[RMDB]
RNA sequence: GGGAACGACUCGAGUAGAGUCGAAAAGCCUCGUCGCUUCCAUAGAAAGGGGACGGGGCAGAUCGCAAGUGCUACAACCGAGCGGUGGUAUCUGUCAAACUAAGCAGCCACUGCACAUCAAUUGACUAAACGAUGCCGAUCUUCGGAUCGGCAUCAAGAAUGUUUCAAGCUUCGGCUUGAAACAUUCAAAAGAAACAACAACAACAAC
Reactivity to 2A3 in 0.01 (KOAc 150mM, MgCl2 10mM, bicine 150mM(pH8.5), 24C), signal-to-noise 2, nucleotides 027 to 156: g010c010c000u010c000g010u020c020g060c170u240u100c080c020a240u160a170g250a040a110a020g000g000g000g010a010c030g000g000g000g000c010a030g010a000u020c000g000c040a100a040g060u070g120c030u130a080c010a180a010c030c040g060a040g020c000g010g000u000g000g010u030a060u140c010u010g170u080c030a170a160a220c150u170a230a000g000c000a000g000c000c000a000c010u020g070c040a010c010a090u160c070a090a280u100u300g060a050c030u220a080a080a010c060g000a000u000g000c000c000g010a000u020c000u000u070c180g110g000a000u000c000g000g000c000a000u000c000a000a000
This 207-nucleotide RNA was probed chemically with 2A3.
2A3 adducts were read by reverse transcription with SuperScript II with manganese.
The RNA was probed in 150 mM KOAc, 10 mM MgCl2 and 150 mM bicine (pH 8.5) at 24 C.